Notes
Source: RMDB library OK1LIB, as collected in RNAgym. Structure probing data (2A3 and DMS) for a 177-nucleotide construct. The reactions ran in a buffer of 150 mM KOAc, 10 mM MgCl2 and 150 mM bicine (pH 8.5), at 24 C. Values cover nucleotides 27 to 126.
RNA sequence: GGGAACGACUCGAGUAGAGUCGAAAAUAGUGGUCUAGCAGAUAAGCUCCGCAUCUAGACCACGUGCACCUCAUGCGGAGCUUAUCUGGAGGUGCACACGGUGGAGAUGCGAAAGCAUUUCCACCGAGCACCAAGAUGGCUUCGGCCAUCUUGGUGCAAAAGAAACAACAACAACAAC
Reactivity to 2A3 in 0.01 (KOAc 150mM, MgCl2 10mM, bicine 150mM(pH8.5), 24C), signal-to-noise 2, nucleotides 027 to 126: u210a010g040u010g030g000u010c010u030a050g090c050a020g080a230u070a140a030g000c000u010c000c010g020c000a020u010c020u050a020g020a050c000c010a010c020g030u030g000c050a020c000c000u060c010a020u060g010c020g000g000a000g000c020u040u020a050u020c030u010g060g010a030g020g010u050g020c010a020c000a010c060g000g000u000g000g000a000g000a000u000g000c010g060a070a010a020g000c000a000u000u010u000c010c000a000c000c000g010a020
Reactivity to DMS in 0.01 (KOAc 150mM, MgCl2 10mM, bicine 150mM(pH8.5), 24C), signal-to-noise 1, nucleotides 027 to 126: u000a000g000u000g020g000u000c010u000a060g010c250a040g020a000u000a070a020g020c000u000c000c000g000c000a070u000c050u030a070g000a260c060c040a040c070g010u040g050c030a160c050c000u010c230a060u000g080c010g040g010a020g000c000u030u000a040u000c020u000g000g010a020g000g000u000g080c020a010c120a250c070g000g000u000g050g000a010g010a030u000g000c020g000a180a000a020g000c000a000u000u000u010c000c030a000c000c000g000a020

DMS adducts were read by reverse transcription with MarathonRT.